[RMDB]
RNA sequence: GGGAACGACUCGAGUAGAGUCGAAAAGAUAUGGAUCUGACCCAAGCGUUAUGUUCGAAGAACUCGGAAACGAGGGAGAACAUUGCGCUUGCAGAUCCUAAGUCAAAGUGUCCCUUCGGGGACACAAGAGUUAGAUUUAGUUCGCUAAAUCUAACUCAAAAGAAACAACAACAACAAC
Reactivity to 2A3 in 0.01 (KOAc 150mM, MgCl2 10mM, bicine 150mM(pH8.5), 24C), signal-to-noise 7, nucleotides 027 to 126: g030a020u080a040u140g000g010a000u000c010u020g170a210c050c080c050a000a000g010c000g000u010u030a000u010g020u000u010c060g140a300a040g020a090a050c000u000c000g010g030a050a070a050c010g000a000g020g010g010a050g000a000a000c000a000u000u020g000c000g000c000u000u010g000c000a000g000a000u020c000c000u020a130a020g050u020c050a080a090a120g000u000g000u000c010c000c000u010u020c250g060g000g020g000a010c010a000c000a000a030
Reactivity to DMS in 0.01 (KOAc 150mM, MgCl2 10mM, bicine 150mM(pH8.5), 24C), signal-to-noise 9, nucleotides 027 to 126: g000a050u000a300u000g000g000a000u000c010u000g000a260c240c270c060a010a010g010c000g010u000u000a000u000g010u000u000c000g000a100a140g000a120a210c010u000c000g010g000a120a110a170c000g000a010g000g000g000a070g000a020a010c000a000u000u000g000c000g010c000u000u000g000c020a010g000a010u000c000c000u000a010a070g010u000c040a100a120a140g010u000g000u000c000c000c000u000u010c200g020g000g000g010a000c000a000c010a040a060